[RMDB]
RNA sequence: GGGAACGACUCGAGUAGAGUCGAAAACCCAGUUCCGGGGCCGUUCACUGGAUCCGAAGCCUCUUGAAGGAUAAUAUAGGCACUCCAUACCCUACUCCGACUCAAUACGUCCCCGUCGUACAGAAUGCAAGGGCAUCCCUGUUCGCAGGGAUGCCAAGCUUUUAGAUUACUUCGGUAAUCUAAAAGCAAAAGAAACAACAACAACAAC
Reactivity to 2A3 in 0.01 (KOAc 150mM, MgCl2 10mM, bicine 150mM(pH8.5), 24C), signal-to-noise 1, nucleotides 027 to 156: c000c000c000a010g060u040u070c030c000g000g000g030g010c020c050g000u100u160c080a050c140u060g000g000a040u040c000c000g050a080a030g040c000c010u060c060u040u080g050a060a050g000g050a010u020a300a070u150a110u080a060g060g000c020a010c070u040c030c020a070u110a080c030c000c030u040a030c010u040c040c030g060a040c010u050c130a090a050u060a030c040g010u000c000c040c040c000g010u030c010g010u040a080c020a050g120a170a160u150g080c080a070a120g020g000g000c000a000u020c010c010c050u030g000u040u100c170g000c040a000g040g010g150a000u000g000c010c000a000a010
This 207-nucleotide RNA was probed chemically with 2A3. Values cover nucleotides 27 to 156. The RNA was probed in 150 mM KOAc, 10 mM MgCl2 and 150 mM bicine (pH 8.5) at 24 C. For 2A3, 492 sequencing reads were counted.